This 177-nucleotide RNA was probed chemically with 2A3 and DMS. The DMS profile rests on 1,431 reads. For 2A3 the reverse transcriptase was SuperScript II with manganese. It was measured as part of the RMDB library RFM100. Values cover nucleotides 27 to 126. The RNA was probed in 150 mM KOAc, 10 mM MgCl2 and 150 mM bicine (pH 8.5) at 24 C.
[RMDB]
RNA sequence: GGGAACGACUCGAGUAGAGUCGAAAACGGCACCCGCGAGGGUGGUUUCAGGUAUGAAAUCGACAGGUACUAAAUCAGUGAACAGAGGGGCAAACAACGCUAUCACGGUAAAAAAAAGCGGCAGUUACACAGAAUCCUGUUUCGACAGGAUUCUGUGAAAAGAAACAACAACAACAAC
Reactivity to 2A3 in 0.01 (KOAc 150mM, MgCl2 10mM, bicine 150mM(pH8.5), 24C), signal-to-noise 2, nucleotides 027 to 126: c010g080g010c010a010c010c000c020g020c060g080a070g030g030g020u010g020g010u010u040u040c020a010g080g010u180a130u110g040a040a000a060u050c040g070a070c080a080g040g070u060a030c010u030a030a070a150u090c030a010g060u020g060a010a020c040a070g060a040g040g020g000g000c050a030a060a000c040a120a000c010g000c020u020a010u120c060a000c060g060g040u130a050a060a000a000a000a000a000a000g000c000g010g000c000a040g020u040u030a030
Reactivity to DMS in 0.01 (KOAc 150mM, MgCl2 10mM, bicine 150mM(pH8.5), 24C), signal-to-noise 1, nucleotides 027 to 126: c080g030g010c050a020c000c060c000g030c300g010a150g010g000g030u000g040g000u070u020u000c050a060g000g020u030a040u000g000a050a040a030u010c070g000a080c030a030g030g000u020a080c060u010a050a050a030u080c050a080g010u010g010a150a100c050a030g010a110g000g000g000g000c080a030a080a100c060a130a050c030g000c010u000a050u000c040a080c050g000g000u040a010a010a000a100a000a020a060a120g030c010g040g010c020a030g000u030u040a190